[RMDB]
Conditions: 150 mM KOAc, 10 mM MgCl2 and 150 mM bicine (pH 8.5), 24 C. An RNA of 177 nucleotides, treated with 2A3 and DMS and read out base by base. It was measured as part of the RMDB library OK2TST. 2A3 adducts were read by reverse transcription with SuperScript II with manganese.

RNA sequence: GGGAACGACUCGAGUAGAGUCGAAAAGGACGAGGGCAUACGGCGUGAGGAGCACACGGUCAGUGUUCGUCGCGUAACCGUGUUUGAGGAUUCGUUCCGUGUCCUGUACCGUCUGGGUCCGGAGGAAGACCUGCGGUAAUUUCGAUUACCGCAGGUCAAAAGAAACAACAACAACAAC
Reactivity to 2A3 in 0.01 (KOAc 150mM, MgCl2 10mM, bicine 150mM(pH8.5), 24C), signal-to-noise 2, nucleotides 027 to 126: g020g000a000c010g020a030g020g000g040c030a010u010a070c020g010g030c000g000u000g020a030g000g050a000g080c030a010c000a010c030g100g170u090c090a040g010u020g010u050u050c080g180u020c010g060c020g040u020a080a070c020c030g020u020g040u030u150u150g110a070g020g000a040u020u030c130g060u130u000c010c010g000u000g010u000c000c020u020g050u050a060c070c020g020u000c020u050g010g020g000u000c020c020g010g050a060g090g040a100a020
Reactivity to DMS in 0.01 (KOAc 150mM, MgCl2 10mM, bicine 150mM(pH8.5), 24C), signal-to-noise 3, nucleotides 027 to 126: g020g000a020c010g010a110g000g010g010c080a060u000a030c030g000g020c020g020u000g000a010g000g010a060g020c030a020c010a100c170g010g000u010c180a100g020u000g000u000u010c040g000u000c000g010c010g020u010a050a120c010c010g000u020g010u000u010u020g000a150g020g010a080u010u010c070g000u000u000c010c010g000u000g010u010c010c000u010g000u000a120c170c050g000u000c030u000g010g000g010u000c020c030g010g000a110g030g010a090a160
The 2A3 profile rests on 1,958 reads.